[RMDB]
RNA sequence: GGGAACGACUCGAGUAGAGUCGAAAAACGAAAUGGUCUUCCGGCGCUUCCCGGGAUCAGGCGAUGGCCCGAAGGACUUCAUACCAUUAUGCGAGGACUUUGAGGGCGAUGAAGUACGAUCGACGUUGAGGCUAUAAAACGGAAAUACCGUGCCAAGAUACGAUAGAUAGUUCGCUAUCUAUCGUAUAAAAGAAACAACAACAACAAC
Reactivity to DMS in 0.01 (KOAc 150mM, MgCl2 10mM, bicine 150mM(pH8.5), 24C), signal-to-noise 4, nucleotides 027 to 156: a110c080g010a080a100a080u010g020g000u000c110u000u000c000c010g000g010c090g040c030u000u000c000c050c000g000g000g010a070u000c020a070g010g030c040g000a150u000g010g000c010c010c010g000a100a050g020g010a130c010u000u000c010a080u000a100c130c150a190u010u000a060u000g020c090g000a070g020g020a170c030u010u010u000g010a160g070g010g010c000g010a050u000g000a100a110g010u010a090c010g010a060u000c030g010a150c040g010u000u000g020a100g020g040c010u010a130u000a030a060a110a080c030g010g000a060a070a160u000a090c020c010g010u000g020c030c030a090a190g010
Reactivity to 2A3 in 0.01 (KOAc 150mM, MgCl2 10mM, bicine 150mM(pH8.5), 24C), signal-to-noise 5, nucleotides 027 to 156: a000c060g030a070a020a050u150g020g010u010c030u110u020c030c020g060g020c050g030c050u060u060c030c010c000g000g020g010a060u060c050a080g130g040c030g070a050u090g080g000c000c000c000g020a010a000g010g020a040c000u000u030c020a030u040a100c120c050a200u260u120a030u090g050c100g030a010g010g010a030c000u050u010u060g140a140g000g020g010c040g010a040u110g040a070a020g030u090a080c040g030a040u020c010g070a070c020g060u020u150g030a010g020g000c030u030a020u110a260a080a010a000c010g010g050a010a110a030u150a090c010c010g010u030g030c010c010a040a010g100